[RMDB]
This 177-nucleotide RNA was probed chemically with 2A3.
It was measured as part of the RMDB library OK1LIB.
The reactions ran in a buffer of 150 mM KOAc, 10 mM MgCl2 and 150 mM bicine (pH 8.5), at 24 C.
For 2A3, 600 sequencing reads were counted.
RNA sequence: GGGAACGACUCGAGUAGAGUCGAAAACGGAACCUUGUCCCCCUAAAUCCGAACUUGGUGUCCAUAACAAGCUAAAACCCUGUAUUUUAGGGACAAGUUUCAAAUAAUUUUUCAGGGAGGACCCCAAGGACUGGGAAGAGUUCGCUCUUCCCAGUCCAAAAGAAACAACAACAACAAC
Reactivity to 2A3 in 0.01 (KOAc 150mM, MgCl2 10mM, bicine 150mM(pH8.5), 24C), signal-to-noise 2, nucleotides 027 to 126: c030g050g000a000a030c000c000u000u020g000u000c000c000c010c000c010u050a110a090a000u130c140c060g130a030a020c030u030u020g020g000u000g000u000c000c000a070u200a200a050c060a080a050g040c040u180a020a070a170a240c000c000c020u060g000u040a160u100u140u040u150a120g000g000g000a010c030a000a000g020u000u010u190c070a030a080a090u150a090a030u120u060u190u100u070c030a020g040g000g000a130g000g000a000c040c030c000c000a040a020